This 177-nucleotide RNA was probed chemically with 2A3 and DMS. High 2A3 reactivity points to a flexible backbone, as in loops and unpaired stretches. Source: RMDB library TTRDEL, as collected in RNAgym. The reactions ran in a buffer of 150 mM KOAc, 10 mM MgCl2 and 150 mM bicine (pH 8.5), at 24 C.
RNA sequence: GGGAACGACUCGAGUAGAGUCGAAAAGAUAUGGACGCUAGGAACUACUCUCGGUGAUCGGAAACGAUCACGGAGAGCUAGUAGCGUCCUAAGUCAAAACGGAAACAACCUUCGGGUUGUUUCCGAACAAGCCAAACAUGUUCGCAUGUUUGGCUUGAAAAGAAACAACAACAACAAC
Reactivity to 2A3 in 0.01 (KOAc 150mM, MgCl2 10mM, bicine 150mM(pH8.5), 24C), signal-to-noise 1, nucleotides 027 to 126: g020a000u050a030u150g000g010a020c000g000c000u030a050g190g250a210a110c020u050a020c020u050c000u010c120g190g000u010g000a000u000c010g050g020a020a040a070c020g000a000u010c020a000c010g040g030a000g000a000g040c000u000a000g000u020a000g000c000g000u000c010c000u000a080a000g050u040c060a030a000a060a170c000g010g060a020a000a010c010a000a000c000c000u070u130c300g000g040g000u000u000g000u000u000u000c000c000g000a010a030
Reactivity to DMS in 0.01 (KOAc 150mM, MgCl2 10mM, bicine 150mM(pH8.5), 24C), signal-to-noise 2, nucleotides 027 to 126: g000a040u010a300u000g030g010a020c000g000c000u010a100g010g010a180a210c030u000a070c000u010c000u000c000g010g050u000g000a000u000c000g010g010a100a070a170c020g000a000u010c000a000c000g000g020a000g000a030g000c170u000a080g000u000a020g030c000g000u000c000c000u000a010a020g000u010c010a050a060a180a180c020g000g000a010a010a010c000a030a020c000c010u000u000c230g020g020g000u000u000g010u000u000u000c000c010g000a000a100